[RMDB]
RNA sequence: GGGAACGACUCGAGUAGAGUCGAAAACGAGGAGAACCAGAAGUACAAGGAGGGCAAGUUCAUCUUGGAGAGGGCCAAGAUGAUGGACCUGUACGAGGGAAACUUCACAUCAGCCUCUGAGGCAUCAUCAUGUAACAAUUUUCGAAUUGUUACAUGAAAAAGAAACAACAACAACAAC
Reactivity to DMS in 0.01 (KOAc 150mM, MgCl2 10mM, bicine 150mM(pH8.5), 24C), signal-to-noise 9, nucleotides 027 to 126: c120g010a080g010g010a070g010a160a180c040c030a110g000a080a150g010u000a040c060a070a150g010g010a090g010g010g010c090a100a110g010u000u000c020a010u000c000u000u000g010g000a250g000a080g000g010g010c010c000a010a030g000a020u000g020a020u000g000g000a070c070c010u000g010u010a050c070g000a170g000g000g010a080a090a100c030u000u000c020a090c140a090u000c110a090g000c020c010u000c100u010g010a120g010g010c060a070u010c130a120
Reactivity to 2A3 in 0.01 (KOAc 150mM, MgCl2 10mM, bicine 150mM(pH8.5), 24C), signal-to-noise 9, nucleotides 027 to 126: c050g010a040g040g020a040g010a030a020c010c010a030g050a170a020g030u020a020c040a080a110g100g050a060g030g150g040c050a050a030g020u030u030c000a010u000c010u000u010g020g010a180g030a060g090g070g030c000c000a000a000g010a000u010g000a010u020g030g030a070c010c010u020g010u030a020c020g010a100g020g010g000a040a070a030c010u040u040c030a030c010a140u140c050a030g020c020c010u060c190u220g090a170g030g000c010a030u070c010a040